Structure probing data (DMS and 2A3) for a 207-nucleotide construct. For DMS, 4,622 sequencing reads were counted. The reactions ran in a buffer of 150 mM KOAc, 10 mM MgCl2 and 150 mM bicine (pH 8.5), at 24 C.
RNA sequence: GGGAACGACUCGAGUAGAGUCGAAAAUACUUAGUACGCGCGUAGUUGCAGGCAUUCCGGGUGCAGCAACUGAAGCGGAAGACUUUUCCCAGAGUGUGCGCUUCAACUGGCGUGCUGAGUAGUGCACGAAUUGCACGUACGUUCGCGUACGUGCAAACUUCUUAGGAAAAUUCGUUUUCCUAAGAAGAAAAGAAACAACAACAACAAC
Reactivity to DMS in 0.01 (KOAc 150mM, MgCl2 10mM, bicine 150mM(pH8.5), 24C), signal-to-noise 2, nucleotides 027 to 156: u000a010c020u010u000a070g020u000a040c010g000c000g030c090g030u010a060g000u010u010g000c010a150g070g030c020a030u000u010c000c300g000g020g180u000g010c020a300g010c000a020a040c030u000g000a040a070g020c020g000g040a090a130g020a050c070u000u000u000u010c000c020c040a300g010a070g020u010g020u000g020c040g000c010u000u000c040a140a140c110u010g020g000c030g000u000g030c040u010g050a090g020u000a070g020u010g030c060a110c040g000a100a190u000u000g020c000a010c000g000u000a000c000g000u010u000c300g010c010g030u000a040c000g000u000g030c000a000a020a060
Reactivity to 2A3 in 0.01 (KOAc 150mM, MgCl2 10mM, bicine 150mM(pH8.5), 24C), signal-to-noise 4, nucleotides 027 to 156: u030a000c010u000u010a000g010u010a010c000g050c060g030c040g230u090a010g030u030u010g000c040a100g090g030c010a020u110u080c090c200g190g020g000u020g000c030a040g000c010a020a020c020u040g010a030a000g010c010g010g040a040a010g130a010c010u050u060u080u050c000c010c000a010g010a000g000u120g010u040g060c020g020c000u010u020c030a150a180c150u170g040g010c000g000u000g010c000u010g000a020g010u020a030g040u070g060c070a010c130g110a110a120u050u010g000c000a000c000g020u000a000c000g010u020u040c210g010c010g060u010a000c000g020u020g000c000a000a020a000
DMS adducts were read by reverse transcription with MarathonRT. 2A3 adducts were read by reverse transcription with SuperScript II with manganese.